An RNA of 207 nucleotides, treated with 2A3 and read out base by base. Values cover nucleotides 27 to 156. Source: RMDB library OK3TST, as collected in RNAgym.
RNA sequence: GGGAACGACUCGAGUAGAGUCGAAAAAUAUGUAGGUGACAAUUUAUUCAUACCACGUCUAACCAUUUAUUAUUAUAUUGGGUUUUGAGGUCUGAGUGCAUGUUCGUACUGCCCAGUGGAGAAUAUGUGGAAAGAAGAAGGCUUUCUUGGCCAGCAGACCUAGCACUCUAUUCGUAGAGUGCUAGGUAAAAGAAACAACAACAACAAC
Reactivity to 2A3 in 0.01 (KOAc 150mM, MgCl2 10mM, bicine 150mM(pH8.5), 24C), signal-to-noise 1, nucleotides 027 to 156: a000u190a070u100g020u070a070g000g030u070g070a060c020a130a080u070u150u110a070u100u190c050a070u210a190c000c090a070c090g080u000c020u090a030a050c020c020a000u000u090u090a090u190u090a110u070u140a100u060a100u200u030g100g010g010u000u080u160u190g010a050g070g000u050c050u060g080a020g100u030g000c110a080u020g050u090u200c130g050u090a020c020u050g010c020c000c000a030g010u000g000g010a070g020a010a000u020a000u110g030u060g020g000a080a090a020g010a060a030g080a050a050g020g030c010u100u000u030c030u060u150g000g050c010c010a000g030c020a000g010